An RNA of 177 nucleotides, treated with DMS and 2A3 and read out base by base. DMS (dimethyl sulfate) methylates the pairing face of unpaired adenines and cytosines.

RNA sequence: GGGAACGACUCGAGUAGAGUCGAAAACAUGUACACCAUAUAUUGAUUCUUUGUGUGCUCCAACGCGCAAAGUCUUAGACUCAAGACAAAACUAACGAGUAUUGGAGUGCUGCGUUAGUAUUUAAUACGUGGAAACAUUGUUCGCAAUGUUUCCACGAAAAGAAACAACAACAACAAC
Reactivity to DMS in 0.01 (KOAc 150mM, MgCl2 10mM, bicine 150mM(pH8.5), 24C), signal-to-noise 1, nucleotides 027 to 126: c100a050u010g000u000a100c120a250c020c050a030u000a070u030a040u000u000g010a000u010u000c010u000u000u010g010u000g000u000g000c030u000c020c010a030a040c000g060c070g000c000a000a020a020g000u000c180u000u000a050g010a140c140u010c090a040a050g010a220c270a060a060a090a050c030u010a000a020c000g000a010g010u020a050u000u010g000g000a030g030u000g010c000u000g090c040g000u000u040a000g000u000a090u000u000u010a070a070u010a120
Reactivity to 2A3 in 0.01 (KOAc 150mM, MgCl2 10mM, bicine 150mM(pH8.5), 24C), signal-to-noise 2, nucleotides 027 to 126: c030a030u140g030u150a060c070a070c090c060a060u160a050u030a070u170u300g070a010u040u010c010u000u030u000g010u000g010u010g000c000u000c010c000a010a000c040g010c010g020c000a020a000a000g000u020c020u040u150a110g060a150c030u050c260a080a120g090a070c010a030a060a050a010c000u000a020a020c020g010a010g000u010a020u030u030g020g010a020g020u010g010c000u000g010c010g000u060u020a000g000u010a030u020u110u080a040a070u170a020
Reactivities are given for positions 27 through 126. The reactions ran in a buffer of 150 mM KOAc, 10 mM MgCl2 and 150 mM bicine (pH 8.5), at 24 C. 2A3 adducts were read by reverse transcription with SuperScript II with manganese. The data come from the RNA Mapping Database (RMDB), library OK2TST.